[RMDB]
RNA sequence: GGGAACGACUCGAGUAGAGUCGAAAAAGGAGAAUGGAUCUGAUACGGUUAUUAUGAUGAGACCGGUGAAUGAGUCUUAGUUGAUGAACACUAUCAGAAUCAUCAACCAAGGAUUAGUGAAGCACCACCACUAUAUAGUCUUCGGACUAUAUAGUGGAAAAGAAACAACAACAACAAC
Reactivity to DMS in 0.01 (KOAc 150mM, MgCl2 10mM, bicine 150mM(pH8.5), 24C), signal-to-noise 9, nucleotides 027 to 126: a070g010g010a080g010a110a070u000g000g000a070u000c030u000g000a080u010a050c180g000g000u000u000a070u000u000a070u000g000a110u000g010a100g000a060c030c030g010g020u000g010a080a060u010g010a100g010u000c010u000u000a060g010u000u000g010a020u000g000a020a050c110a120c170u000a080u000c160a090g000a110a080u000c000a010u000c040a020a040c010c030a040a080g000g000a060u010u000a060g010u000g010a090a100g010c080a070c050c060a250
Reactivity to 2A3 in 0.01 (KOAc 150mM, MgCl2 10mM, bicine 150mM(pH8.5), 24C), signal-to-noise 9, nucleotides 027 to 126: a010g130g020a080g050a090a100u100g020g030a050u020c020u050g020a040u050a120c040g000g040u040u020a090u110u050a070u160g160a040u050g020a010g030a060c010c030g000g030u060g070a080a110u120g010a020g040u010c000u030u050a060g010u050u030g010a020u030g020a040a010c050a030c140u090a120u220c050a020g100a110a060u010c000a000u000c000a000a030c010c010a050a020g040g000a050u050u080a060g050u060g100a070a010g040c030a020c010c020a020
Conditions: 150 mM KOAc, 10 mM MgCl2 and 150 mM bicine (pH 8.5), 24 C. The record gives the reactivity of an RNA of 177 nucleotides to DMS and 2A3. Values are in units of 0.01, from 0 to 300, in steps of 10. For DMS the reverse transcriptase was MarathonRT. For 2A3, 13,219 sequencing reads were counted. The DMS profile rests on 15,179 reads.